An RNA of 207 nucleotides, treated with 2A3 and read out base by base. 2A3 adducts were read by reverse transcription with SuperScript II with manganese.
RNA sequence: GGGAACGACUCGAGUAGAGUCGAAAAGUAUAAAAUCUGCAAGUAGUGCUAUUGUUGGAAUCACCGUACCUAUUUUGGUUUACGCUCCAAGAUCGGUGGAUAGCAGCCCUAUCAAUAUCUAGGAGAAAAAACCCAGGACUGUUCGCAGUCCUGGGAAGUGUAUUCCCAAGUUCGCUUGGGAAUACACAAAAGAAACAACAACAACAAC
Reactivity to 2A3 in 0.01 (KOAc 150mM, MgCl2 10mM, bicine 150mM(pH8.5), 24C), signal-to-noise 1, nucleotides 027 to 156: g030u000a010u040a300a010a020a110u080c030u060g060c040a120a090g050u090a000g050u160g060c030u030a010u140u080g100u010u080g030g060a080a030u080c030a010c020c020g010u090a050c000c000u100a180u170u230u030u080g010g010u060u090u020a020c040g000c020u010c010c000a010a000g040a000u040c020g010g000u080g040g000a010u010a000g010c040a010g000c030c020c000u120a140u080c070a120a080u050a020u220c000u030a020g000g000a010g000a130a110a000a000a070a000c000c000c000a020g030g000a020c000u010g050u070u080c120g010c070a000g000u000c010c020u000g000g000g010a000a000
Source: RMDB library M2RFPK, as collected in RNAgym.